Description: The record gives the reactivity of an RNA of 177 nucleotides to 2A3 and DMS. DMS adducts were read by reverse transcription with MarathonRT. For 2A3, 8,221 sequencing reads were counted. The DMS profile rests on 11,414 reads.
RNA sequence: GGGAACGACUCGAGUAGAGUCGAAAAGAUCAAUUAUGAUUGCAAUGUAAUAUGUCAAGGCAGACAUAUCUAGCUGUCGCCUUAGCUAGAGAUAGCCGCUUUAUUGCUUUCAUAAGAACGGCAAGAAGAUAUAGGAUAGCUUCGGCUAUCCUAUAUCAAAAGAAACAACAACAACAAC
Reactivity to 2A3 in 0.01 (KOAc 150mM, MgCl2 10mM, bicine 150mM(pH8.5), 24C), signal-to-noise 6, nucleotides 027 to 126: g070a130u120c030a020a100u030u000a010u010g010a000u020u000g000c010a010a010u040g030u180a050a050u070a080u180g090u090c060a040a060g030g000c040a030g020a050c020a020u100a050u020c040u020a010g040c030u010g110u140c070g140c040c040u080u070a020g000c010u010a000g000a010g000a050u210a090g040c080c110g050c040u020u060u030a020u000u000g000c000u000u020u000c000a000u020a020a020g050a080a030c050g080g010c050a040a050g060a090a020
Reactivity to DMS in 0.01 (KOAc 150mM, MgCl2 10mM, bicine 150mM(pH8.5), 24C), signal-to-noise 8, nucleotides 027 to 126: g000a160u010c050a100a160u000u000a010u000g000a010u000u000g010c010a010a010u000g010u010a060a040u010a030u000g000u000c110a050a080g020g010c030a160g010a020c040a040u000a060u000c050u000a040g010c050u000g000u000c160g020c170c110u010u000a020g020c010u000a010g000a060g010a110u000a080g000c010c080g010c060u000u000u000a020u000u000g010c010u000u000u000c000a010u000a020a020g000a100a090c150g010g010c140a090a090g010a120a130